RNA sequence: GGGAACGACUCGAGUAGAGUCGAAAAGGUGACACCACCGCGAACAAAGACGCCUGGAUGGUCGGGUACACGCCGUCGUUGUCUACGGCUGUGUGGGUGGGCACCGUCAAGGGUGACGAGCCACUGGGAAUCAGGCCAAGUUCGCUUGGCCUGAUUCAAAAGAAACAACAACAACAAC
Reactivity to 2A3 in 0.01 (KOAc 150mM, MgCl2 10mM, bicine 150mM(pH8.5), 24C), signal-to-noise 1, nucleotides 027 to 126: g080g000u040g000a090c040a060c120c000a000c040c010g000c010g040a060a040c040a110a200a010g060a070c060g040c010c030u030g060g100a170u150g130g000u230c030g010g000g010u060a020c010a000c010g010c010c000g000u010c040g040u060u190g100u080c040u030a020c020g010g000c100u060g010u000g000u000g010g000g010u120g010g020g000c030a020c000c000g000u030c030a030a040g090g000g010u090g010a070c080g010a040g000c000c010a060c050u060g000g000
Reactivity to DMS in 0.01 (KOAc 150mM, MgCl2 10mM, bicine 150mM(pH8.5), 24C), signal-to-noise 2, nucleotides 027 to 126: g000g000u000g000a090c070a070c000c010a110c010c080g030c070g000a080a050c140a090a180a210g000a070c120g010c080c040u020g000g000a060u030g060g000u010c030g030g040g010u000a040c030a000c000g010c020c000g000u000c190g010u020u010g000u030c060u010a020c000g030g030c000u060g030u000g000u020g000g000g020u000g000g000g000c040a050c040c000g030u020c080a130a120g000g000g000u020g000a050c060g020a180g000c020c020a040c040u010g000g010